This 177-nucleotide RNA was probed chemically with 2A3 and DMS. For 2A3 the reverse transcriptase was SuperScript II with manganese. The RNA was probed in 150 mM KOAc, 10 mM MgCl2 and 150 mM bicine (pH 8.5) at 24 C. The 2A3 profile rests on 1,224 reads. DMS (dimethyl sulfate) methylates the pairing face of unpaired adenines and cytosines. DMS adducts were read by reverse transcription with MarathonRT.

RNA sequence: GGGAACGACUCGAGUAGAGUCGAAAAAAUUAGGGUGUGAGAGUAUCUCUCUCCCAGCCGAUUCGCGCAGCCAUUUUUUUUGAUUUUAUUUGGGUUAGCUGCGCGUAUUGGCUGGCGUUCCCGCAAACUAAAGAUUAUGCUUCGGCAUAAUCUUUAGAAAAGAAACAACAACAACAAC
Reactivity to 2A3 in 0.01 (KOAc 150mM, MgCl2 10mM, bicine 150mM(pH8.5), 24C), signal-to-noise 1, nucleotides 027 to 126: a000a000u260u090a030g000g000g000u050g010u000g020a030g000a010g010u200a300u060c060u010c000u000c000u000c020c010c020a000g000c000c000g000a000u000u000c000g000c000g000c000a000g020c000c000a030u060u020u060u030u040u020u130u270g100a120u130u120u100u300a110u090u180u080g080g060g000u070u100a030g000c000u000g010c000g000c000g000u010a000u000u000g010g000c020u000g010g010c010g010u010u010c020c010c000g000c000a090a090a000
Reactivity to DMS in 0.01 (KOAc 150mM, MgCl2 10mM, bicine 150mM(pH8.5), 24C), signal-to-noise 2, nucleotides 027 to 126: a050a100u010u010a100g010g000g010u000g010u010g000a030g000a040g010u010a130u030c080u000c030u000c040u000c020c000c000a020g020c000c000g000a020u000u000c000g030c010g020c000a030g010c010c040a000u010u000u000u000u000u020u010u000g000a080u010u010u010u010a050u010u010u000g020g010g010u010u010a090g000c010u010g010c000g000c000g010u000a000u000u000g010g010c000u000g010g010c010g000u000u000c010c000c000g030c190a070a040a180